Notes: Structure probing data (DMS and 2A3) for a 177-nucleotide construct. The RNA was probed in 150 mM KOAc, 10 mM MgCl2 and 150 mM bicine (pH 8.5) at 24 C. For DMS, 2,662 sequencing reads were counted.
RNA sequence: GGGAACGACUCGAGUAGAGUCGAAAAGAAACUGGCCAUUGAGACAAUGAAUGACUUCAUCGGCAUAGAUGAGCAAAGUUCAAUUUACAGAGACAUGCCGUCUGCCCAUCAUUUUAUGGAGAAGAGGCUUGACAGUCUACUUCGGUAGACUGUCAAGAAAAGAAACAACAACAACAAC
Reactivity to DMS in 0.01 (KOAc 150mM, MgCl2 10mM, bicine 150mM(pH8.5), 24C), signal-to-noise 2, nucleotides 027 to 126: g010a050a050a040c030u020g000g010c030c040a050u010u000g070a080g000a100c120a080a050u010g000a000a020u020g030a080c270u000u030c030a020u000c080g000g000c140a070u010a100g010a010u000g000a080g000c060a020a020a070g000u020u000c040a060a050u010u000u000a160c100a050g000a150g020a080c060a040u000g000c040c030g010u000c040u020g000c060c010c030a060u000c210a020u030u000u020u010a060u000g000g000a030g000a070a020g000a160g010g010
Reactivity to 2A3 in 0.01 (KOAc 150mM, MgCl2 10mM, bicine 150mM(pH8.5), 24C), signal-to-noise 4, nucleotides 027 to 126: g060a000a030a040c070u040g070g000c020c020a040u050u120g040a020g010a050c050a050a070u130g030a080a020u030g030a060c030u110u060c050a060u050c060g050g030c120a100u220a080g010a010u010g010a060g050c040a110a120a040g010u050u080c020a030a110u030u080u200a070c080a010g080a010g010a080c020a040u040g030c010c000g010u030c020u030g010c000c020c000a020u060c010a020u010u110u140u230a090u080g050g050a040g030a180a030g040a040g100g060